[RMDB]
Structure probing data (2A3 and DMS) for a 177-nucleotide construct.
For 2A3, 1,860 sequencing reads were counted.
The reactions ran in a buffer of 150 mM KOAc, 10 mM MgCl2 and 150 mM bicine (pH 8.5), at 24 C.
For DMS the reverse transcriptase was MarathonRT.
For 2A3 the reverse transcriptase was SuperScript II with manganese.
RNA sequence: GGGAACGACUCGAGUAGAGUCGAAAAGGUGAGCGAGAGAACUCUCGUUAAGGAACUCGGCAAAAUGACCCCGUAACUUCGGGAGAAGGGGUGCUGAUCUAACGAUCAGCCGCAGUGAAUAGGCCCAUAUCGUAGCUGAAUUCGUUCAGCUACGAUAAAAAGAAACAACAACAACAAC
Reactivity to 2A3 in 0.01 (KOAc 150mM, MgCl2 10mM, bicine 150mM(pH8.5), 24C), signal-to-noise 2, nucleotides 027 to 126: g050g040u130g070a020g000c010g000a000g000a000g020a260a140c050u020c000u000c030g010u020u010a030a030g060g020a040a010c010u000c030g040g030c030a040a040a040a150u210g090a050c020c000c000c010g020u030a050a050c040u020u090c180g040g020g010a030g010a000a040g070g010g010g000u010g000c040u030g000a020u000c010u050a060a040c070g000a010u000c000a000g020c010c010g050c080a010g000u020g020a050a070u080a110g060g030c010c010c000a000
Reactivity to DMS in 0.01 (KOAc 150mM, MgCl2 10mM, bicine 150mM(pH8.5), 24C), signal-to-noise 4, nucleotides 027 to 126: g020g020u000g010a090g010c010g000a060g010a050g010a140a140c150u010c010u010c030g020u010u010a090a110g000g010a210a020c030u000c030g010g010c040a060a050a140a090u000g000a070c020c000c010c000g010u000a080a180c050u000u000c190g020g000g000a070g000a100a160g000g000g000g020u000g000c070u010g010a010u000c010u010a110a130c300g010a010u000c000a070g000c000c060g020c150a030g000u010g010a090a080u010a100g000g010c000c020c010a170